[RMDB]
RNA sequence: GGGAACGACUCGAGUAGAGUCGAAAAGUGGAGGCGAAAGUCACCCUCCUCGCCUCGCAAGUUCGUGCUUGCGACUUACACGUAGGGCGAGGGGUGGGCGAAAGUUGCCAUGAGACCGUAACUUUCGAUGAGGCGGGACUGUUCGCAGUCCCGCCAAGAAGUAUGCGUACUUCGGUACGCAUACUUCAAAAGAAACAACAACAACAAC
Reactivity to 2A3 in 0.01 (KOAc 150mM, MgCl2 10mM, bicine 150mM(pH8.5), 24C), signal-to-noise 2, nucleotides 027 to 156: g160u090g020g030a040g000g100c120g030a060a060a000g130u130c070a140c040c000c000u010c010c000u000c000g000c010c000u000c030g000c000a010a030g030u300u300c140g160u300g020c030u020u040g000c000g020a020c000u150u300a070c110a010c150g210u120a190g000g010g020c010g030a000g000g000g000g000u230g000g010g000c030g000a000a000a000g010u020u020g050c030c060a060u090g040a020g010a120c030c030g040u020a000a000c000u000u000u000c010g020a030u110g030a020g050g000c000g040g000g000a000c000u030g030u080u100c200g000c090a030g000u000c000c000c000g000c000c020a000a020